Description:
Source: RMDB library M2RFPK, as collected in RNAgym. Structure probing data (DMS and 2A3) for a 207-nucleotide construct. Reactivities are given for positions 27 through 156. 2A3 is a SHAPE reagent: it acylates the 2'-hydroxyl of flexible nucleotides of all four kinds.
RNA sequence: GGGAACGACUCGAGUAGAGUCGAAAAGCUUCCUCUUGGCGCGGAGGUUUAACUGCGCUCGCUCCCCAUAUCGGUGUGGGCGCACGGGAUUUACAAAUUAAAGUCCUUUAGGGAGCGGAAAGGGACAAAAACUUGCACGUGUUCGCACGUGCAAGAAUCCUGAAGAUAUGUUCGCAUAUCUUCAGGAAAAAGAAACAACAACAACAAC
Reactivity to DMS in 0.01 (KOAc 150mM, MgCl2 10mM, bicine 150mM(pH8.5), 24C), signal-to-noise 1, nucleotides 027 to 156: g000c050u000u000c020c010u010c000u000u010g000g080c040g030c030g020g020a150g030g030u000u000u000a100a150c010u000g030c000g020c000u000c010g010c000u000c030c010c030c090a210u000a140u000c110g000g020u020g010u000g020g010g040c030g020c030a010c090g030g000g000a130u000u000u000a300c070a070a090a160u010u000a050a140a190g010u000c000c000u000u000u020a030g000g010g000a020g010c030g020g000a050a030a050g030g010g000a130c080a120a040a050a090a090c000u000u000g020c000a000c020g030u000g000u000u010c260g010c020a010c000g000u000g000c020a010a010g000a040a060
Reactivity to 2A3 in 0.01 (KOAc 150mM, MgCl2 10mM, bicine 150mM(pH8.5), 24C), signal-to-noise 1, nucleotides 027 to 156: g000c000u070u040c010c000u000c020u010u030g010g000c020g000c020g020g000a030g000g060u060u080u110a040a020c010u020g000c010g000c000u000c000g000c010u020c020c000c000c000a130u180a050u290c110g000g000u000g010u020g040g090g000c010g030c000a000c070g010g020g010a000u090u140u190a080c120a010a050a000u110u080a100a030a000g000u060c000c000u010u020u000a070g010g010g010a000g070c060g000g000a070a050a030g080g000g020a030c070a040a160a000a000a030c000u000u000g000c010a000c000g000u000g000u010u000c010g000c100a000c000g000u000g010c000a000a000g000a000a000